Chemical mapping of a 177-nucleotide RNA with 2A3 and DMS. Conditions: 150 mM KOAc, 10 mM MgCl2 and 150 mM bicine (pH 8.5), 24 C. Source: RMDB library M2PK90, as collected in RNAgym.
RNA sequence: GGGAACGACUCGAGUAGAGUCGAAAAGGGGUUAGCGUUUGCAAAACGCUGUUAUUGCUAUGAUCUGGAUUUAGCGCAAGUAGGUCCGAAAUCCAGAUCAACAUUUCGGACCUCCGCGCUAAUAAAAGUAUUUCGUGUAGUUCGCUACACGAAAUACAAAAGAAACAACAACAACAAC
Reactivity to 2A3 in 0.01 (KOAc 150mM, MgCl2 10mM, bicine 150mM(pH8.5), 24C), signal-to-noise 1, nucleotides 027 to 126: g080g000g000g000u070u070a030g010c010g010u020u010u190g060c020a130a100a000a020c020g000c020u030g000u050u090a100u030u090g060c080u020a050u220g040a120u120c030u070g150g010a090u010u010u010a000g010c010g000c010a180a000g040u140a010g150g000u000c010c000g020a000a000a000u050c100c030a050g020a120u120c000a000a000c000a000u000u010u020c000g000g010a000c030c000u000c010c050g000c000g000c000u000a000a000u020a020a040a010a010
Reactivity to DMS in 0.01 (KOAc 150mM, MgCl2 10mM, bicine 150mM(pH8.5), 24C), signal-to-noise 3, nucleotides 027 to 126: g010g010g010g030u000u000a010g020c000g000u000u000u020g030c260a070a070a040a020c010g020c000u000g000u010u000a040u000u000g000c050u000a060u010g000a110u000c060u000g010g000a210u000u000u000a020g000c000g030c010a080a130g050u020a000g010g010u000c010c000g000a000a010a000u000c140c160a090g000a110u010c190a070a070c170a030u000u000u000c000g000g000a020c000c000u010c100c080g000c000g010c000u000a010a000u000a040a040a080a170
Values cover nucleotides 27 to 126.